[RMDB]
RNA sequence: GGGAACGACUCGAGUAGAGUCGAAAAGAUAUGGAGGAAGGGAGACAUGGUUUCGAUGAGUCGGAAACGACGAGAAACCCUCUGUCGAAGAACUUCCUCCUAAGUCAAACGAGUCUUCGGACUCGAACAAUUUCUCAUUCUUCGGAAUGAGAAAUUGAAAAGAAACAACAACAACAAC
Reactivity to 2A3 in 0.01 (KOAc 150mM, MgCl2 10mM, bicine 150mM(pH8.5), 24C), signal-to-noise 2, nucleotides 027 to 126: g020a030u070a040u170g000g000a000g020g000a030a010g010g010g050a040g010a020c000a010u180g000g030u000u020u010c070g110a280u230g130a120g050u000c010g000g040a030a040a060c010g000a010c010g000a010g010a100a010a010c000c030c010u010c010u000g010u020c000g020a090a000g000a010a010c000u010u000c000c000u000c000c000u000a010a000g000u000c020a030a020a100c020g000a010g000u000c010u030u080c260g130g000a010c000u020c000g000a000a000
Reactivity to DMS in 0.01 (KOAc 150mM, MgCl2 10mM, bicine 150mM(pH8.5), 24C), signal-to-noise 3, nucleotides 027 to 126: g010a040u000a300u010g000g020a020g030g010a010a000g000g010g000a090g010a000c000a000u000g000g000u000u010u000c010g000a150u010g000a190g000u000c000g000g000a090a090a200c000g000a010c010g000a130g010a010a010a020c000c000c000u000c010u000g010u000c000g010a060a110g020a160a160c000u000u000c000c000u000c010c000u000a010a070g010u000c060a060a140a220c040g000a000g010u010c000u000u010c210g040g000a010c000u000c000g000a100a180
Annotation:
The record gives the reactivity of an RNA of 177 nucleotides to 2A3 and DMS. 2A3 adducts were read by reverse transcription with SuperScript II with manganese.